[RMDB]
RNA sequence: GGGAACGACUCGAGUAGAGUCGAAAAGAUAUGGAGUACACCCACAGUGGAGCUUGGAUUUAGGAAUAGGGUUCGGAAACGAACCCUUAGUACUUGUCAGCUCCACCCCUUGUGUACUCCUAAGUCAAACCUGACUUAUCUUCGGAUAAGUCAGGAAGUAUGAUAGUCGCUUCGGCGACUAUCAUACAAAAGAAACAACAACAACAAC
Reactivity to 2A3 in 0.01 (KOAc 150mM, MgCl2 10mM, bicine 150mM(pH8.5), 24C), signal-to-noise 1, nucleotides 027 to 156: g040a030u080a050u090g020g000a010g010u000a000c000a000c010c070c100a100c140a100g010u000g020g000a010g000c030u140u120g210g030a060u300u300u130a030g010g010a030a000u000a000g000g000g020u000u000c010g000g040a100a060a060c020g000a010a000c030c010c020u000u010a000g000u000a000c010u010u020g010u000c000a000g000c020u010c000c000a000c000c000c000c000u060u170g000u000g000u000a000c010u020c010c000u010a090a000g070u030c050a050a050a060c000c000u000g000a000c000u010u020a000u000c000u010u070c200g000g010a000u000a000a000g000u000c000a000g000g000a000a010
This 207-nucleotide RNA was probed chemically with 2A3. The reactions ran in a buffer of 150 mM KOAc, 10 mM MgCl2 and 150 mM bicine (pH 8.5), at 24 C.